RNA sequence: GGGAACGACUCGAGUAGAGUCGAAAAGGUGCGAUGUUCGCAUCGCACCAAACAAGCUCAAAAUGACGCAAACAACGGCGUCAGCGUGAGCAAACGCGGAAAAAACCACUUGGUUCGCCAAGUGGAACGCUAUAAUAAGGUUCGCCUUAUUAUAGCGAAAAGAAACAACAACAACAAC
Reactivity to DMS in 0.01 (KOAc 150mM, MgCl2 10mM, bicine 150mM(pH8.5), 24C), signal-to-noise 8, nucleotides 027 to 126: g000g020u000g010c010g020a010u000g010u010u000c230g030c000a050u000c010g030c000a010c000c000a020a050a070c140a090a120g010c000u000c000a030a060a070a130u000g010a010c000g010c000a050a080a120c260a090a120c280g000g000c000g000u000c000a020g000c300g000u000g010a000g000c010a050a060a070c170g000c110g000g000a000a040a060a060a090a110c010c000a010c000u010u000g000g010u000u020c150g000c010c010a000a000g010u000g000g010a010a030
Reactivity to 2A3 in 0.01 (KOAc 150mM, MgCl2 10mM, bicine 150mM(pH8.5), 24C), signal-to-noise 7, nucleotides 027 to 126: g000g000u000g000c000g000a000u010g030u050u080c130g010c080a000u000c000g000c000a000c000c000a000a000a000c010a010a010g000c000u000c000a050a050a030a120u040g000a000c000g000c020a040a180a290c060a170a110c160g080g000c000g000u000c000a000g000c020g060u030g010a010g000c030a050a060a010c140g020c080g080g040a060a080a010a010a020a090c010c000a000c010u010u010g030g010u050u040c170g030c070c000a000a000g000u010g000g000a000a000
The record gives the reactivity of an RNA of 177 nucleotides to DMS and 2A3. For DMS, 13,525 sequencing reads were counted. The data come from the RNA Mapping Database (RMDB), library M2PK50. The reactions ran in a buffer of 150 mM KOAc, 10 mM MgCl2 and 150 mM bicine (pH 8.5), at 24 C.